[RMDB]
RNA sequence: GGGAACGACUCGAGUAGAGUCGAAAAGGAUAAAAGUGUUAAACAGCUAGCAAACUCCAAACCGGUGUGGUGAGGGCCCAAAUGUCUAGGAGUUCUAUGCCUCCCUAACUCCACCUAAGAAGCAGAGAGUCCAUAUGUGGUUCGCCACAUAUGGACUAAAAGAAACAACAACAACAAC
Reactivity to DMS in 0.01 (KOAc 150mM, MgCl2 10mM, bicine 150mM(pH8.5), 24C), signal-to-noise 1, nucleotides 027 to 126: g000g000a110u000a010a110a140a100g000u000g020u000u000a060a060a170c120a100g030c050u020a010g020c080a050a050a120c050u000c000c010a060a230a140c150c080g050g020u000g080u020g010g020u020g030a160g030g000g000c010c070c050a040a120a050u000g000u000c070u010a030g010g000a050g020u000u010c070u010a040u000g000c090c000u000c020c010c010u020a030a070c050u010c030c010a030c000c070u020a080a080g010a050a090g020c110a050g000a120g020